[RMDB]
RNA sequence: GGGAACGACUCGAGUAGAGUCGAAAACAAGUCAGUCGAUCUCUUGUUUUGGCUGGCAGAAAAGAGGUUUGUAGCUAUGAUUUGGCCAUCAAAAGGAUGGAUGAGGCGAUACAGCGUGAUUCCGCACGGAUUGCCGAUAUUUCGAUAUCGGCAAUCCAAAAGAAACAACAACAACAAC
Reactivity to DMS in 0.01 (KOAc 150mM, MgCl2 10mM, bicine 150mM(pH8.5), 24C), signal-to-noise 2, nucleotides 027 to 126: c040a090a070g000u000c030a060g010u010c050g030a030u010c050u000c130u000u010g030u010u000u000u000g000g010c060u000g010g000c020a060g000a070a050a080a050g000a090g020g010u000u010u000g040u000a060g000c040u000a110u000g010a110u010u000u010g020g010c000c010a020u000c040a090a090a080a170g020g010a060u000g010g000a070u010g010a200g000g000c010g010a090u000a030c040a010g030c010g020u010g000a150u000u000c020c020g050c150a110c270
Reactivity to 2A3 in 0.01 (KOAc 150mM, MgCl2 10mM, bicine 150mM(pH8.5), 24C), signal-to-noise 2, nucleotides 027 to 126: c060a090a010g010u070c020a000g020u020c020g060a080u000c060u070c000u200u290g180u210u090u020u030g030g010c040u020g010g040c010a020g060a010a080a000a010g130a010g030g060u130u210u160g070u180a030g040c030u030a030u140g030a120u110u050u220g030g000c010c000a000u040c010a060a110a160a050g210g000a010u020g010g000a020u080g020a020g040g000c020g020a040u040a090c020a020g020c020g030u040g010a060u090u000c030c000g060c050a030c070